RNA sequence: GGGAACGACUCGAGUAGAGUCGAAAAAACAGCUGCACGUACGUACGAGCAGUUUUCGAAAUAAACGUACGUACGAAAUAAAUAAAUUCUACUCGUUGCGAAACAAAGCAAAGUCGUUCCCAGGGAACCAUGAAAUCAGGUUCGCCUGAUUUCAUGGAAAAGAAACAACAACAACAAC
Reactivity to DMS in 0.01 (KOAc 150mM, MgCl2 10mM, bicine 150mM(pH8.5), 24C), signal-to-noise 1, nucleotides 027 to 126: a040a110c160a100g010c100u000g050c080a180c010g000u000a000c010g000u000a000c000g020a010g080c210a170g000u000u000u000u020c050g000a050a010a040u030a070a140a090c030g010u000a000c000g000u000a020c040g010a080a000a050u030a050a100a010u000a030a080a000u000u000c000u000a010c000u000c000g000u030u000g030c000g000a150a090a050c300a080a180a140g000c040a110a240a040g000u010c000g040u000u000c000c000c000a000g000g000g010a160a100
Reactivity to 2A3 in 0.01 (KOAc 150mM, MgCl2 10mM, bicine 150mM(pH8.5), 24C), signal-to-noise 2, nucleotides 027 to 126: a000a000c110a050g070c030u150g000c060a000c120g000u000a000c000g020u020a000c000g000a030g040c080a080g000u090u010u040u080c030g050a080a040a050u140a040a070a010c000g000u000a000c000g000u010a000c020g000a020a010a020u140a010a030a000u110a010a040a000u020u010c000u010a010c000u010c020g040u030u070g010c020g060a180a130a100c060a060a130a030g000c010a070a040a000g000u000c000g000u000u000c000c000c000a000g000g030g010a030a040